An RNA of 207 nucleotides, treated with 2A3 and read out base by base.

RNA sequence: GGGAACGACUCGAGUAGAGUCGAAAAGGUCGUGAAUAAGCCCGGAGUACAUUCCCAAUGGAACUAGGGAACCCCUCCGGUCUUAUCCAACCUCUGUUUCGGCAGAGGACACCGUGCUCCACAGUUGUAAGACUGUGGGCCCGAGAGAAGUCGCUCUACGUCCCUAAAAGUUCGCUUUUAGGGACGUAAAAGAAACAACAACAACAAC
Reactivity to 2A3 in 0.01 (KOAc 150mM, MgCl2 10mM, bicine 150mM(pH8.5), 24C), signal-to-noise 1, nucleotides 027 to 156: g020g010u090c050g030u080g200a260a060u000a020a010g000c000c000c000g000g000a010g020u110a070c060a190u080u060c020c020c000a030a040u280g140g030a160a110c210u180a230g000g010g010a010a000c010c000c020c000u000c000c000g040g060u000c000u000u000a010u000c000c000a020a010c000c000u020c060u030g040u000u000u070c030g150g000c020a000g000a000g010g010a030c000a000c000c010g020u050g000c000u040c060c010a000c000a000g000u030u020g170u140a130a080g020a040c010u020g000u000g000g000g020c030c000c010g100a130g030a010g020a230a020g050u010c050g020c140u000c050u000
The RNA was probed in 150 mM KOAc, 10 mM MgCl2 and 150 mM bicine (pH 8.5) at 24 C. Reactivities are given for positions 27 through 156.